[RMDB]
Notes
The record gives the reactivity of an RNA of 177 nucleotides to DMS and 2A3. The DMS profile rests on 2,518 reads. The data come from the RNA Mapping Database (RMDB), library TTRINS.

RNA sequence: GGGAACGACUCGAGUAGAGUCGAAAAGAUAUGGAGCGAACUACGAGUUCCCACAUCGAAGAACGCUAAAUUUACUCGGAAACGAGUAAAUUUAGCGGGAGAUGUGAUCACUCGCGCUCCUAAGUCACGUGAACAAAAAGUUCGCUUUUUGUUCACGAAAAGAAACAACAACAACAAC
Reactivity to DMS in 0.01 (KOAc 150mM, MgCl2 10mM, bicine 150mM(pH8.5), 24C), signal-to-noise 3, nucleotides 027 to 126: g020a060u020a300u010g020g010a010g010c000g030a090a110c120u020a300c050g000a010g010u000u010c180c060c010a010c020a000u000c000g000a140a160g010a220a210c000g000c000u000a010a010a000u010u000u000a000c000u000c000g000g000a090a100a220c000g000a000g000u010a000a000a000u000u000u000a000g010c000g000g110g000a050g000a000u000g010u000g000a090u000c190a020c000u020c010g000c020g000c000u010c000c000u010a000a070g010u040c020a210
Reactivity to 2A3 in 0.01 (KOAc 150mM, MgCl2 10mM, bicine 150mM(pH8.5), 24C), signal-to-noise 2, nucleotides 027 to 126: g060a020u080a030u200g000g000a000g050c040g030a130a120c190u170a090c300g000a000g030u030u030c030c060c010a000c000a000u020c040g210a300a060g010a220a030c000g000c000u030a000a000a030u040u000u000a000c000u010c000g030g000a060a080a060c010g020a000g000u010a000a000a000u020u000u010a000g000c020g020g010g000a040g000a000u000g010u020g030a040u190c070a010c000u000c000g010c010g040c000u000c000c010u030a290a020g000u020c020a000